Background
This 207-nucleotide RNA was probed chemically with 2A3.
RNA sequence: GGGAACGACUCGAGUAGAGUCGAAAAAUCUCUUCUCUUUCCAUCGCGCUUCUUCCUCGAUUCGGACCGGCUCAUCUCGACAAGAGGCGGCGGUCCUCAGUGCUCUUACUCUUUUCUGAAAAGAGGAGACUGCUGGACUCGCCGCCCCAGUUCGAGCGUAGUGAUUUUUCUUCGGAAAAAUCACUACAAAAGAAACAACAACAACAAC
Reactivity to 2A3 in 0.01 (KOAc 150mM, MgCl2 10mM, bicine 150mM(pH8.5), 24C), signal-to-noise 1, nucleotides 027 to 156: a000u070c060u030c000u240u090c050u020c000u170u190u020c070c020a060u060c020g020c020g010c120u240u040c010u120u050c130c000u030c010g040a040u040u020c020g060g000a050c000c000g050g030c090u050c080a120u000c050u010c000g000a040c030a180a110g100a080g050g010c000g000g010c000g000g000u000c020c020u010c000a000g000u030g270c020u000c000u130u150a260c000u040c000u040u020u090u080c220u300g120a180a090a000a000g010a020g020g000a020g010a000c000u010g090c070u000g010g000a050c080u090c260g000c000c010g020c000c000c000c000a050g010u050u020c000g000a020g000c000

Values cover nucleotides 27 to 156. Conditions: 150 mM KOAc, 10 mM MgCl2 and 150 mM bicine (pH 8.5), 24 C.